[RMDB]
RNA sequence: GGGAACGACUCGAGUAGAGUCGAAAAGAUAUGGACCGUAACAGGGAGGUAUAGCUCCUCGGAAACGAGAAGAGCUGCGAACCUGUACGGUCCUAAGUCAAAAGACUUCUCCUUCGGGAGAAGUCAACUUACUCCAUCUGUUCGCAGAUGGAGUAAGAAAAGAAACAACAACAACAAC
Reactivity to DMS in 0.01 (KOAc 150mM, MgCl2 10mM, bicine 150mM(pH8.5), 24C), signal-to-noise 3, nucleotides 027 to 126: g000a020u000a300u000g010g010a010c000c000g020u000a080a080c020a010g000g000g030a110g020g020u010a070u000a020g010c000u000c000c010u000c000g000g000a080a080a110c000g010a000g000a100a080g000a000g000c000u000g000c050g000a120a220c000c000u000g010u000a000c010g000g000u000c000c000u000a000a080g000u000c040a090a090a130a150g010a010c000u000u000c000u000c000c000u010u020c200g030g010g020a020g000a000a000g000u000c010a030a050
Reactivity to 2A3 in 0.01 (KOAc 150mM, MgCl2 10mM, bicine 150mM(pH8.5), 24C), signal-to-noise 2, nucleotides 027 to 126: g020a000u050a020u120g010g020a010c020c010g000u020a210a110c020a010g010g060g070a150g210g000u260a090u080a160g000c000u000c000c010u000c020g020g030a050a040a010c030g010a000g020a300a060g010a070g000c010u010g000c040g080a110a160c010c000u000g000u000a000c000g000g000u000c000c000u000a000a000g010u000c000a000a010a010a080g020a000c000u000u010c000u000c010c020u040u120c300g040g000g000a000g000a000a000g000u000c000a000a000
This 177-nucleotide RNA was probed chemically with DMS and 2A3. For 2A3 the reverse transcriptase was SuperScript II with manganese. The reactions ran in a buffer of 150 mM KOAc, 10 mM MgCl2 and 150 mM bicine (pH 8.5), at 24 C.